Structure probing data (2A3 and DMS) for a 177-nucleotide construct. Values cover nucleotides 27 to 126. Reactivities are rounded to 0.1 and cut off at 0 and 3. 2A3 adducts were read by reverse transcription with SuperScript II with manganese. For DMS, 2,166 sequencing reads were counted.
[RMDB]
RNA sequence: GGGAACGACUCGAGUAGAGUCGAAAAGAAGUGGCAGGGACAUGCCCCAAAAGCUCGUUCUAGCAACAUAUGUUUGGCUAGUUCGAGCGAUUAGUCUGGAGGAGCGUCCUCUCGCCUCUUGACGAGACGUAUCGCGUAUCUUCGGAUACGCGAUACGAAAAGAAACAACAACAACAAC
Reactivity to 2A3 in 0.01 (KOAc 150mM, MgCl2 10mM, bicine 150mM(pH8.5), 24C), signal-to-noise 3, nucleotides 027 to 126: g100a020a000g010u020g030g000c010a020g010g040g000a010c040a060u220g100c000c000c000c010a020a110a050a020g000c000u000c000g010u030u000c000u000a020g010c000a030a020c030a080u280a120u300g080u060u070u090g130g010c000u000a010g010u000u000c000g000a000g010c000g000a000u010u050a030g120u020c090u090g040g000a150g040g000a010g100c030g020u000c000c020u030c010u000c030g000c010c020u010c000u010u020g090a080c070g040a000g020a090
Reactivity to DMS in 0.01 (KOAc 150mM, MgCl2 10mM, bicine 150mM(pH8.5), 24C), signal-to-noise 2, nucleotides 027 to 126: g020a040a050g000u000g010g000c040a060g040g020g000a060c060a150u040g010c000c000c000c010a000a070a180a180g000c020u000c000g000u000u000c000u000a000g000c050a030a040c020a240u030a090u020g030u020u010u000g020g020c000u010a000g000u000u000c000g000a020g000c000g000a040u020u020a130g000u050c040u010g010g000a120g000g030a120g000c080g000u000c000c000u000c030u050c180g000c000c000u000c000u000u020g000a070c070g000a190g020a180